[RMDB]
RNA sequence: GGGAACGACUCGAGUAGAGUCGAAAAGCAAGAUGCUUCGGCAUCUUGCAGUCGUAGCGCGAUCGACAGAAUUACAGCUAUGUCGAACGAGGAAGACCGCGCACAUCAUCCCUUUCGAGGGAUGAAAAUUCAGAAAGGAAUUCGUUCCUUUCUGAAUAAAAGAAACAACAACAACAAC
Reactivity to 2A3 in 0.01 (KOAc 150mM, MgCl2 10mM, bicine 150mM(pH8.5), 24C), signal-to-noise 9, nucleotides 027 to 126: g000c000a000a000g000a000u010g000c010u050u130c240g100g000c010a000u000c000u000u000g000c000a000g030u010c060g030u050a040g010c000g000c000g020a060u020c000g010a000c010a010g100a070a040u240u170a170c060a090g070c100u110a050u110g000u010c000g020a050a070c040g020a090g060g110a080a040g030a060c080c010g000c000g010c000a020c010a030u030c000a000u000c010c000c000u020u030u040c170g090a010g000g010g000a000u000g000a010a000a010
Reactivity to DMS in 0.01 (KOAc 150mM, MgCl2 10mM, bicine 150mM(pH8.5), 24C), signal-to-noise 9, nucleotides 027 to 126: g010c000a000a000g000a010u000g010c000u000u010c200g030g010c000a000u000c000u000u000g010c000a030g020u000c050g010u000a090g020c010g010c010g010a180u000c000g010a060c010a020g000a130a140u010u010a090c280a120g010c100u000a100u000g010u000c000g010a050a090c090g000a120g000g000a100a100g000a060c060c010g020c010g020c020a110c180a140u010c000a010u000c000c000c000u000u000u010c150g010a020g000g000g000a000u000g000a010a030a090
Structure probing data (2A3 and DMS) for a 177-nucleotide construct. For DMS, 27,606 sequencing reads were counted. Reactivities are given for positions 27 through 126. The RNA was probed in 150 mM KOAc, 10 mM MgCl2 and 150 mM bicine (pH 8.5) at 24 C.